[RMDB]
RNA sequence: GGGAACGACUCGAGUAGAGUCGAAAAGAUAAGCUAGCAGCAAAAAGGAACCGAUUCCCACCAAGUUCGGAAAGAGAUACCGGGCGAGGCGCUGAAGAAAGAAUCUCGCUUCAGACACCCCAAUGACAUGACCUUAAAAUGUUCGCAUUUUAAGGAACAUUGGCUACAGAUUCGUCUGUAGCCAAUGAAAAGAAACAACAACAACAAC
Reactivity to 2A3 in 0.01 (KOAc 150mM, MgCl2 10mM, bicine 150mM(pH8.5), 24C), signal-to-noise 3, nucleotides 027 to 156: g010a100u120a060a050g030c030u060a010g000c030a010g000c050a030a030a070a120a070g150g010a070a010c090c020g070a110u070u000c000c000c000a030c000c010a050a010g000u000u030c000g010g050a090a090a010g090a030g010a030u050a120c020c020g000g010g000c020g000a020g020g000c080g000c040u030g000a000a020g030a040a280a020g040a070a070u100c060u020c170g040c000u030u010c030a040g030a120c020a080c010c040c010c050a040a060u100g010a030c070a110u100g110a070c000c000u000u000a000a000a000a010u010g000u060u100c210g010c120a000u000u000u000u000a000a000g000g010a040a000
Reactivity to DMS in 0.01 (KOAc 150mM, MgCl2 10mM, bicine 150mM(pH8.5), 24C), signal-to-noise 1, nucleotides 027 to 156: g020a080u010a110a070g000c030u010a080g010c020a080g000c030a050a210a150a080a140g020g000a090a150c030c060g010a170u000u000c020c020c020a120c050c040a100a300g010u010u000c020g080g000a060a120a150g000a140g000a090u000a060c000c010g000g020g040c030g040a080g030g000c060g000c030u010g000a030a060g000a110a070a100g000a060a070u000c020u020c020g010c030u000u000c030a040g000a230c070a090c030c030c000c020a070a110u020g030a080c030a090u020g000a080c000c000u000u000a000a010a030a010u000g000u000u010c300g000c030a020u000u000u000u000a000a060g000g030a030a170